[RMDB]
RNA sequence: GGGAACGACUCGAGUAGAGUCGAAAAACCUUUGUGAGGAAUGGAGUGUUGCUCAGCGUGUGCCUACCACGAAUAACCCAUUGGGUUACUAUGUAACCCGUUGAACCCAACACUAUGAAGUUCCUCACUCUGGUAAAUGUGGGCUUCGGCCCACAAAGCUCCUCUUAUAGUUCGCUAUAAGAGGAGCAAAAGAAACAACAACAACAAC
Reactivity to 2A3 in 0.01 (KOAc 150mM, MgCl2 10mM, bicine 150mM(pH8.5), 24C), signal-to-noise 5, nucleotides 027 to 156: a010c000c000u000u000u010g010u000g000a010g010g010a010a010u050g000g070a020g000u000g000u000u020g000c020u030c050a020g000c010g010u080g040u070g090c020c070u110a120c080c060a060c050g080a160a160u060a060a040c000c010c100a270u140u280g020g000g010u010u010a020c050u110a080u290g040u040a030a030c000c020c000g000u010u010g010a020a010c010c070c000a010a000c000a000c000u030a300u300g040a030a020g010u010u000c000c000u000c000a000c000u000c000u010g000g020u050a030a070a180u120g000u000g010g000g000c000u050u050c240g080g000c000c000c000a000c000a000a000a000
Reactivity to DMS in 0.01 (KOAc 150mM, MgCl2 10mM, bicine 150mM(pH8.5), 24C), signal-to-noise 1, nucleotides 027 to 156: a020c010c000u000u000u000g020u010g010a000g010g000a040a060u000g000g000a040g040u010g010u000u000g000c020u000c020a070g030c030g030u000g010u000g030c070c060u010a300c090c100a090c100g030a110a070u000a030a060c010c000c030a270u010u000g030g000g000u000u000a010c020u000a040u000g010u000a030a020c010c020c000g010u000u000g000a050a060c050c060c040a030a060c000a000c020u010a170u000g000a170a290g000u000u000c000c010u020c030a000c040u000c030u000g000g010u010a060a080a100u000g000u000g000g020g060c000u000u000c160g070g060c020c010c000a000c010a000a080a300
This 207-nucleotide RNA was probed chemically with 2A3 and DMS. Source: RMDB library RNAMAK, as collected in RNAgym. For 2A3, 5,240 sequencing reads were counted.